[RMDB]
Annotation: This 177-nucleotide RNA was probed chemically with DMS and 2A3. The data come from the RNA Mapping Database (RMDB), library OK2TST. The RNA was probed in 150 mM KOAc, 10 mM MgCl2 and 150 mM bicine (pH 8.5) at 24 C. The 2A3 profile rests on 1,068 reads. Reactivities are given for positions 27 through 126. DMS adducts were read by reverse transcription with MarathonRT.
RNA sequence: GGGAACGACUCGAGUAGAGUCGAAAAUCUGUGGCAAGGGCAGAAAUAUCAGGGCAAGCAGCCCAGGCGGCGAACUCGCCGCAGCCUGACCGACAGCUUUUCCUUCAGCGGUGCUUCUCAGGCAAACCCGGAAUAGGACAUUCGUGUCCUAUUCCGGAAAAGAAACAACAACAACAAC
Reactivity to DMS in 0.01 (KOAc 150mM, MgCl2 10mM, bicine 150mM(pH8.5), 24C), signal-to-noise 1, nucleotides 027 to 126: u000c000u000g000u020g000g000c050a000a210g000g020g020c040a070g000a120a090a080u000a080u020c200a050g010g000g030c020a140a200g010c170a140g110c010c020c000a070g010g000c000g010g000c010g030a170a090c300u010c070g000c010c000g040c010a010g070c010c000u000g000a260c230c010g010a010c000a050g000c090u020u010u020u000c010c030u000u000c090a050g020c050g010g020u020g050c070u000u000c070u000c060a130g000g000c090a050a050a050c180
Reactivity to 2A3 in 0.01 (KOAc 150mM, MgCl2 10mM, bicine 150mM(pH8.5), 24C), signal-to-noise 1, nucleotides 027 to 126: u020c000u020g020u000g120g010c050a100a090g030g000g040c040a030g130a100a180a000u220a060u120c140a070g030g010g000c060a100a070g070c020a050g060c040c010c020a000g020g030c000g000g010c030g020a250a140c090u050c130g000c000c000g030c000a000g010c000c000u000g010a030c000c050g050a010c000a020g000c030u040u040u010u000c000c000u090u110c090a040g040c050g070g050u010g020c000u080u050c020u060c110a010g030g030c030a050a020a050c000